[RMDB]
RNA sequence: GGGAACGACUCGAGUAGAGUCGAAAAUAUGUCGAAAUUAUUAUCCGCCAGUUGACGAGCUUACUCCAAGUAACCGAUGCUGGCAGCAGUAACCUGUUUGUGGGUCAACUGGUACACAGUCACCACCUCGCAAAGUUAAAUUCGUUUAACUUUGCGAAAAAGAAACAACAACAACAAC
Reactivity to DMS in 0.01 (KOAc 150mM, MgCl2 10mM, bicine 150mM(pH8.5), 24C), signal-to-noise 7, nucleotides 027 to 126: u010a060u000g020u010c090g000a110a110a130u010u000a050u000u000a110u010c070c070g010c000c010a020g000u000u010g010a190c180g000a190g000c100u000u000a050c060u010c170c130a050a080g010u000a050a090c050c030g010a120u000g020c020u000g010g010c080a030g020c090a030g010u010a070a070c090c020u000g010u000u010u010g030u000g010g000g010u000c100a040a020c030u000g000g000u000a070c140a070c070a040g010u000c060a090c030c030a070c120c170
Reactivity to 2A3 in 0.01 (KOAc 150mM, MgCl2 10mM, bicine 150mM(pH8.5), 24C), signal-to-noise 5, nucleotides 027 to 126: u190a060u080g070u050c040g050a040a090a070u200u120a080u100u080a050u100c030c040g000c000c010a000g010u020u020g020a030c010g000a010g030c020u050u060a040c020u090c140c050a110a020g000u030a100a060c030c040g030a050u090g010c010u030g020g010c020a000g000c000a010g020u050a050a110c020c010u040g080u140u140u120g100u150g030g040g000u030c020a020a010c010u010g000g040u070a020c090a010c000a040g040u040c020a020c120c010a040c020c010